[RMDB]
RNA sequence: GGGAACGACUCGAGUAGAGUCGAAAACAAUUACGAAAUAAGCUGCAGCUGGCGGAGUUUGAUUUUGAGAACGGUUUAACUAGUCACACGGAUCUUGUAAAAAUGAGACAAGGUCAAGUCGGAGUUAUAAAUAAAUGGACUUCGGUCCAUUUAUUUAAAAAGAAACAACAACAACAAC
Reactivity to DMS in 0.01 (KOAc 150mM, MgCl2 10mM, bicine 150mM(pH8.5), 24C), signal-to-noise 3, nucleotides 027 to 126: c040a090a100u010u000a120c090g010a080a110a080u010a080a110g010c030u000g010c040a050g020c040u000g040g020c090g000g010a090g020u000u020u010g000a050u010u010u000u020g000a120g010a050a090c070g000g010u020u000u000a020a050c050u000a060g000u010c090a080c090a060c110g030g000a020u000c000u010u000g000u000a020a060a060a100a120u020g010a180g000a040c020a000a030g000g000u000c010a030a080g010u010c070g010g020a080g000u000u000a110